[RMDB]
RNA sequence: GGGAACGACUCGAGUAGAGUCGAAAAGGAUUGUCUUCCUCAAGUUUCUUGAUUUUCUUCUUCGCCUUCCGGAGCUCCUUCUCGAGAUCCUCAGCUUUUUUCCUUGAGUUCACCCACUGCUCGAGGACACCGGGGAUGUUCGCAUCCCCGAAAAGAAACAACAACAACAAC
Reactivity to 2A3 in 0.01 (KOAc 150mM, MgCl2 10mM, bicine 150mM(pH8.5), 24C), signal-to-noise 5, nucleotides 027 to 129: g040g020a050u140u180g060u020c030u030u050c010c010u030c060a030a070g020u010u040u020c040u080u090g100a140u110u060u020u020c010u050u000c000u050u030c000g040c040c020u030u030c020c010g080g010a030g030c020u030c020c000u040u010c030u000c010g060a060g000a050u020c010c030u070c030a100g020c050u050u070u040u030u120u080c000c000u010u010g010a000g020u030u010c040a100c090c000c000a020c060u020g000c010u030c010g000a000g020g020a010c000a030c030
Reactivity to DMS in 0.01 (KOAc 150mM, MgCl2 10mM, bicine 150mM(pH8.5), 24C), signal-to-noise 2, nucleotides 027 to 129: g000g060a090u030u060g010u020c050u020u100c030c000u000c090a130a120g020u000u020u010c050u050u030g030a180u010u020u050u000c020u010u030c000u000u010c040g020c000c000u000u000c000c020g050g040a060g060c040u010c000c160u000u000c030u050c020g000a130g020a080u030c000c000u040c060a120g000c110u040u020u020u000u000u000c000c000u060u000g030a090g000u000u000c060a130c040c010c020a170c110u060g020c000u000c050g020a030g020g040a020c300a040c130